Chemical mapping of a 177-nucleotide RNA with DMS and 2A3. 2A3 adducts were read by reverse transcription with SuperScript II with manganese. Reactivities are given for positions 27 through 126.

[RMDB]
RNA sequence: GGGAACGACUCGAGUAGAGUCGAAAAGAUAUGGAACGUAUGUUAGCUUUGAUCUCGGAAACGAGGGAGCUGGACAUGACGUUCCUAAGUCAAAACUGAAGUAUUACGUUCGCGUAAUACUUCAGAACCUCCAAUUGAAGUUCGCUUCAAUUGGAGGAAAAGAAACAACAACAACAAC
Reactivity to DMS in 0.01 (KOAc 150mM, MgCl2 10mM, bicine 150mM(pH8.5), 24C), signal-to-noise 3, nucleotides 027 to 126: g000a050u010a300u000g000g010a000a020c000g020u000a020u000g000u010u000a060g000c010u000u000u010g010a070u020c000u000c000g000g000a090a080a170c000g010a010g010g000g010a000g010c000u000g000g040a010c000a020u000g020a000c010g010u000u000c000c000u000a000a100g020u000c040a080a060a110a200c000u000g000a010a010g010u000a010u000u000a010c000g010u000u010c240g010c010g020u000a000a000u000a000c000u000u000c010a000g000a070a110
Reactivity to 2A3 in 0.01 (KOAc 150mM, MgCl2 10mM, bicine 150mM(pH8.5), 24C), signal-to-noise 3, nucleotides 027 to 126: g030a010u080a040u130g000g000a010a000c000g010u010a000u020g010u010u020a000g000c020u250u240u090g090a100u120c000u000c000g010g040a100a060a050c020g000a000g010g020g000a000g000c010u050g030g030a010c000a010u080g110a010c000g000u000u000c000c010u000a030a010g040u000c030a030a000a120a150c010u010g000a000a000g000u010a010u000u000a010c020g010u010u110c220g000c000g170u000a010a000u010a000c000u000u000c010a000g000a000a010
Conditions: 150 mM KOAc, 10 mM MgCl2 and 150 mM bicine (pH 8.5), 24 C. Source: RMDB library TTRDEL, as collected in RNAgym.